RNA sequence: GGGAACGACUCGAGUAGAGUCGAAAAGAUAUGGAUCGAAGUAGGGAGAAUUAAACAUCGGAAACGAUGUGAUUCUUUGAUCUACCGAUCCUAAGUCAAAACAACUCCGACUUCGGUCGGAGUUGAACAUAACUCCGAUCUUCGGAUCGGAGUUAUGAAAAGAAACAACAACAACAAC
Reactivity to 2A3 in 0.01 (KOAc 150mM, MgCl2 10mM, bicine 150mM(pH8.5), 24C), signal-to-noise 2, nucleotides 027 to 126: g030a010u040a020u120g000g010a010u030c040g120a300a080g020u020a000g000g000g040a100g000a020a000u060u100a300a210a070c010a000u000c030g030g010a040a030a000c000g010a010u000g030u010g000a000u020u010c000u300u260u260g060a070u040c010u010a020c020c000g000a000u000c000c010u010a050a010g050u000c020a010a000a110a290c010a020a000c030u000c010c010g030a020c020u070u100c300g030g000u000c000g000g010a000g000u010u010g000a020a000
Reactivity to DMS in 0.01 (KOAc 150mM, MgCl2 10mM, bicine 150mM(pH8.5), 24C), signal-to-noise 3, nucleotides 027 to 126: g000a030u000a250u010g000g000a000u000c000g010a150a180g010u000a030g000g010g000a040g010a040a010u000u010a100a090a170c010a010u000c000g020g000a100a050a100c000g020a010u010g010u000g010a040u000u000c010u010u000u010g020a090u010c000u000a010c000c010g000a020u000c000c000u020a020a150g000u000c010a090a100a140a220c030a000a010c010u000c000c000g000a020c010u000u010c280g000g020u000c000g000g000a000g010u000u000g010a030a200
The record gives the reactivity of an RNA of 177 nucleotides to 2A3 and DMS. 2A3 is a SHAPE reagent: it acylates the 2'-hydroxyl of flexible nucleotides of all four kinds. Conditions: 150 mM KOAc, 10 mM MgCl2 and 150 mM bicine (pH 8.5), 24 C.